Chemical mapping of a 177-nucleotide RNA with DMS and 2A3.
[RMDB]
RNA sequence: GGGAACGACUCGAGUAGAGUCGAAAAACUCCGAAGUUCGCUUCGGAGUAAAAUGGGCCCGAAGUCGCACAUGAAAGGGUCAAGUCGCGAUAAAUUAAAUAAAAAUCGAGAGCUUCGGCUCUCGAAAGGUAAUACACUCUUUCGAGAGUGUAUUACCAAAAGAAACAACAACAACAAC
Reactivity to DMS in 0.01 (KOAc 150mM, MgCl2 10mM, bicine 150mM(pH8.5), 24C), signal-to-noise 2, nucleotides 027 to 126: a050c010u010c000c010g020a010a020g020u000u010c250g020c020u000u000c000g020g000a000g010u010a010a030a020a040u000g030g000g000c010c000c000g000a130a130g000u010c030g000c060a100c070a090u000g010a070a190a190g000g010g000u000c020a080a070g020u000c100g050c010g010a040u000a060a070a070u010u010a030a080a090u000a020a040a030a070a160u000c010g000a010g000a010g030c020u000u010c230g030g000c000u000c000u000c010g010a010a020a020
Reactivity to 2A3 in 0.01 (KOAc 150mM, MgCl2 10mM, bicine 150mM(pH8.5), 24C), signal-to-noise 2, nucleotides 027 to 126: a010c000u020c000c010g010a000a020g010u030u160c150g060c140u000u000c010g000g000a000g000u000a000a000a010a000u030g010g000g000c040c000c010g010a090a010g050u020c000g000c020a010c010a100u060g110a150a100a140g120g020g070u040c010a000a010g070u060c070g010c020g030a010u030a070a120a020u130u180a080a060a040u160a090a110a050a020a030u020c000g000a000g000a000g000c000u040u030c210g080g000c000u030c000u000c000g000a000a000a000
The reactions ran in a buffer of 150 mM KOAc, 10 mM MgCl2 and 150 mM bicine (pH 8.5), at 24 C. For 2A3, 1,813 sequencing reads were counted.